[RMDB]
RNA sequence: GGGAACGACUCGAGUAGAGUCGAAAAUUUCACACUCACUUCAAUGACGGUGAUAGAUACUACAUAUCACUCCUGCUUAGAGGGUCAUCUAAGCUAAACCAUGUGAAUAUAACCUUUCGGGCCUCGAGAGACGGAAGUGAGUUCAAUUCUCACCAACCAUAAGAUGGCAGUUCGCUGCCAUCUUAUGAAAAGAAACAACAACAACAAC
Reactivity to DMS in 0.01 (KOAc 150mM, MgCl2 10mM, bicine 150mM(pH8.5), 24C), signal-to-noise 2, nucleotides 027 to 156: u000u010u000c070a020c050a050c010u000c030a030c050u010u010c040a090a170u000g020a110c100g000g000u000g050a030u020a040g010a220u000a130c080u000a080c090a300u030a030u000c000a060c010u000c050c030u000g040c010u000u010a050g020a050g000g010g000u000c080a070u000c020u000a020a080g020c010u010a070a080a060c050c080a150u010g010u000g000a080a080u000a100u000a060a050c060c040u010u000u000c020g020g020g000c030c020u000c060g010a170g030a140g020a070c060g020g010a060a030g020u000g010a060g010u000u010c090a060a200u020u000c020u000c010a050c040c040a070a160c100
Reactivity to 2A3 in 0.01 (KOAc 150mM, MgCl2 10mM, bicine 150mM(pH8.5), 24C), signal-to-noise 4, nucleotides 027 to 156: u070u090u080c050a030c010a000c030u000c010a030c000u030u030c040a080a280u190g060a130c100g010g000u000g010a000u000a010g060a020u120a120c050u070a040c140a140u050a000u020c010a000c010u080c000c020u070g000c000u010u000a000g010a010g040g050g060u070c020a030u000c030u000a020a000g010c000u030a070a030a010c060c040a050u170g080u070g120a100a000u150a010u050a090a090c010c000u020u050u040c040g160g060g090c050c100u130c070g020a020g000a020g030a050c070g020g000a030a000g000u000g000a000g000u000u010c010a020a050u020u040c010u020c040a060c040c020a060a060c020